[RMDB]
An RNA of 177 nucleotides, treated with 2A3 and DMS and read out base by base. It was measured as part of the RMDB library M2PK90. The reactions ran in a buffer of 150 mM KOAc, 10 mM MgCl2 and 150 mM bicine (pH 8.5), at 24 C. Reactivities are given for positions 27 through 126.
RNA sequence: GGGAACGACUCGAGUAGAGUCGAAAAUAUUAUAGCGCACUAAAGACGCUGAUCUUUAGUUACCAAGGAACUUUAGUGCUGAGCUCCGAGUUCCAAGGUCCCAUGUCGGACCUUAGCACUAAUUGAACAGUCAGAGUGAAUUCGUUCACUCUGACUGAAAAGAAACAACAACAACAAC
Reactivity to 2A3 in 0.01 (KOAc 150mM, MgCl2 10mM, bicine 150mM(pH8.5), 24C), signal-to-noise 2, nucleotides 027 to 126: u100a000u090u240a140u210a250g070c060g000c050a010c020u030a020a010a020g000a010c040g130c300u100g090a230u000c000u000u000u000a000g000u000u040a080c040c000a070a080g120g010a080a110c030u040u040u000a010g000u000g000c010u020g000a000g040c000u000c010c000g010a030g000u220u000c050c000a000a020g010g050u000c010c000c010a060u110g130u000c010g010g000a000c000c000u010u010a000g000c000a000c000u020a040a040u070u110g080a140a020
Reactivity to DMS in 0.01 (KOAc 150mM, MgCl2 10mM, bicine 150mM(pH8.5), 24C), signal-to-noise 2, nucleotides 027 to 126: u030a120u000u010a090u020a130g030c100g020c160a090c020u000a000a010a000g000a020c020g020c270u010g020a070u000c010u000u000u000a010g010u020u000a110c080c070a050a130g010g010a110a120c060u000u000u000a000g000u000g010c020u000g000a020g020c270u000c020c000g020a050g010u010u020c150c090a080a060g020g000u000c000c010c030a200u010g000u010c010g010g000a010c140c000u000u010a000g010c010a010c000u000a020a040u000u000g010a100a070